[RMDB]
RNA sequence: GGGAACGACUCGAGUAGAGUCGAAAAGCGUACUACAAGCGGAACCAGGCAUCGAUCUUCCCGGACUAUGCUCUGUAUAUGGAGGAUCUUCCCAAAUAGGAAGAUUGAAGUAUACAGAGCAUAGUCCGGGAAGGGAGCCUGCUAACGCUUGUAUCGCCGUAAUGGUAAUGUUCGCAUUACCAUUACGAAAAGAAACAACAACAACAAC
Reactivity to DMS in 0.01 (KOAc 150mM, MgCl2 10mM, bicine 150mM(pH8.5), 24C), signal-to-noise 2, nucleotides 027 to 156: g050c020g050u000a100c080u030a040c000a020a000g040c000g010g010a130a210c300c000a010g010g020c020a220u000c150g070a090u000c000u000u000c000c000c010g000g010a050c000u010a010u000g000c000u000c010u000g000u000a020u000a030u010g010g000a300g000g000a030u000c010u000u000c000c000c020a090a140a240u010a060g010g040a070a010g020a020u000u000g010a230a300g010u000a030u000a020c000a020g000a030g030c000a000u000a030g020u000c000c010g000g000g010a000a000g010g000g020a050g040c000c010u010g020c010u010a110a300c030g040c020u000u000g010u000a000u000c000g040c070